[RMDB]
Record summary
This 207-nucleotide RNA was probed chemically with DMS. The DMS profile rests on 4,052 reads.
RNA sequence: GGGAACGACUCGAGUAGAGUCGAAAAGGGGUCGAUCCCGUUUGACGAUAAUAACACAGUAGGAAACGACAUGAAGAGUAGGCUGAAGCCUCCACGGCCUAUGACUUCAACAGCGUUUCCUACUGUGUUAUUAUCCGAGGGAUCGACGGAGGCACCCGAUUUAGCGUAGGUUCGCCUACGCUAAAUCAAAAGAAACAACAACAACAAC
Reactivity to DMS in 0.01 (KOAc 150mM, MgCl2 10mM, bicine 150mM(pH8.5), 24C), signal-to-noise 2, nucleotides 027 to 156: g020g010g050g040u000c010g010a040u000c010c000c010g070u000u000u010g000a150c040g010a040u000a000a010u000a000a010c010a010c000a000g010u000a010g000g000a020a020a010c000g030a100c030a230u010g000a010a000g010a300g020u000a020g000g020c010u000g010a030a070g040c020c020u010c030c010a300c050g000g000c000c000u000a000u010g010a190c000u000u000c000a080a150c110a170g000c020g020u010u000u000c000c000u000a000c010u000g010u000g010u030u000a000u000u000a000u000c030c030g020a300g000g010g010a000u000c010g010a000c030g040g010a040g000g020c030a190c000c000c050